Source: RMDB library OK1LIB, as collected in RNAgym. Structure probing data (2A3 and DMS) for a 177-nucleotide construct. 2A3 adducts were read by reverse transcription with SuperScript II with manganese. Conditions: 150 mM KOAc, 10 mM MgCl2 and 150 mM bicine (pH 8.5), 24 C. DMS adducts were read by reverse transcription with MarathonRT. High DMS reactivity at an A or C suggests that its Watson-Crick edge is free.

RNA sequence: GGGAACGACUCGAGUAGAGUCGAAAAGGCUUAUCAAGAGAGGGGGAGUGACUGGCGCGAAGAACCCCGGCAACCAGAAAUGGUGCCAAUUCCUGCAGCGGAAACGUUGAAAGAUGAGCCGAAACAACACGCAUUUUAUAUUCGUAUAAAAUGCGUGAAAAGAAACAACAACAACAAC
Reactivity to 2A3 in 0.01 (KOAc 150mM, MgCl2 10mM, bicine 150mM(pH8.5), 24C), signal-to-noise 7, nucleotides 027 to 126: g000g000c000u010u010a010u040c080a150a030g120a030g030a160g130g020g010g010g020a090g040u080g060a040c030u100g040g060c030g000c020g060a060a070g030a050a060c000c000c000c000g000g000c030a100a190c000c000a000g030a040a050a020u050g010g000u000g000c000c000a010a020u070u010c010c000u040g030c010a000g010c010g010g010a050a040a010c020g020u020u060g040a130a080a020g000a010u010g000a000g000c000c000g010a030a030a010c070a010a010
Reactivity to DMS in 0.01 (KOAc 150mM, MgCl2 10mM, bicine 150mM(pH8.5), 24C), signal-to-noise 5, nucleotides 027 to 126: g010g020c000u010u000a010u000c010a150a110g010a100g010a100g000g000g000g010g000a120g000u000g010a130c040u010g000g000c050g010c060g030a090a120g000a090a200c020c000c010c060g010g000c010a040a060c020c000a030g010a080a100a150u000g010g020u000g000c030c010a060a160u000u020c000c020u010g010c050a030g000c020g010g000a100a080a100c040g000u000u010g000a060a080a100g000a010u000g000a010g010c020c000g000a120a070a080c170a070a190